[RMDB]
RNA sequence: GGGAACGACUCGAGUAGAGUCGAAAAAAAAAGAUAUGGAAAUGUGGAGCAGUCCGUGCGUUUGACGUCAAUCGGAAACGAUUGACCGAGCACGGAUACUGCGAUGAAACAUUUCCUAAGUCAAAAAGGAAUCACUUAAGUUCGCUUAAGUGAUUCCAAAAGAAACAACAACAACAAC
Reactivity to DMS in 0.01 (KOAc 150mM, MgCl2 10mM, bicine 150mM(pH8.5), 24C), signal-to-noise 1, nucleotides 027 to 126: a030a030a070a190a080g020a040u010a300u010g000g010a010a000a000u000g010u000g000g000a070g050c020a020g010u000c000c000g000u000g000c000g010u000u010u000g000a140c300g020u010c010a000a010u020c000g000g020a200a070a140c000g020a030u000u000g000a000c030c000g000a090g000c000a020c000g000g010a000u000a010c000u000g010c000g000a090u030g010a070a130a020c000a000u000u000u000c000c000u000a050a080g020u020c040a040a060a070a070a120